The record gives the reactivity of an RNA of 177 nucleotides to DMS and 2A3. For 2A3 the reverse transcriptase was SuperScript II with manganese. Values cover nucleotides 27 to 126. The RNA was probed in 150 mM KOAc, 10 mM MgCl2 and 150 mM bicine (pH 8.5) at 24 C.
[RMDB]
RNA sequence: GGGAACGACUCGAGUAGAGUCGAAAAACGAAGGCAGCUAAGUUGGUGACGCCGAGUGGAGUAAAGACGGAGAGUAGUUCUCCGCUAGUCGGAAAGACUCCGCAUCCUCCGGCAGACCCUUCUAGCUCAUUAGCUUCAACUUCGGUUGAAGCUAAUGAAAAGAAACAACAACAACAAC
Reactivity to DMS in 0.01 (KOAc 150mM, MgCl2 10mM, bicine 150mM(pH8.5), 24C), signal-to-noise 1, nucleotides 027 to 126: a070c060g010a180a120g000g000c220a030g050c000u000a000a070g040u010u000g000g000u000g000a300c210g020c000c000g000a100g000u000g000g010a030g000u000a010a020a040g000a180c010g020g020a040g010a090g000u000a150g020u000u000c090u000c010c010g000c020u000a070g010u010c000g000g010a040a070a130g000a080c030u000c020c010g010c010a260u000c010c000u000c000c000g000g000c020a030g000a300c300c000c010u010u000c020u000a010g010c030u010
Reactivity to 2A3 in 0.01 (KOAc 150mM, MgCl2 10mM, bicine 150mM(pH8.5), 24C), signal-to-noise 1, nucleotides 027 to 126: a020c070g060a080a040g210g060c100a010g030c040u070a220a090g070u040u000g060g000u020g030a000c040g000c000c000g020a040g010u010g000g000a010g020u090a020a040a000g090a020c000g010g000a010g020a020g040u260a040g050u120u040c060u000c040c000g020c020u080a040g110u300c000g000g030a000a100a030g070a040c030u000c000c000g000c000a000u010c010c010u020c000c010g000g000c000a000g000a050c010c000c000u000u000c000u000a010g000c000u010

Source: RMDB library VIROID, as collected in RNAgym.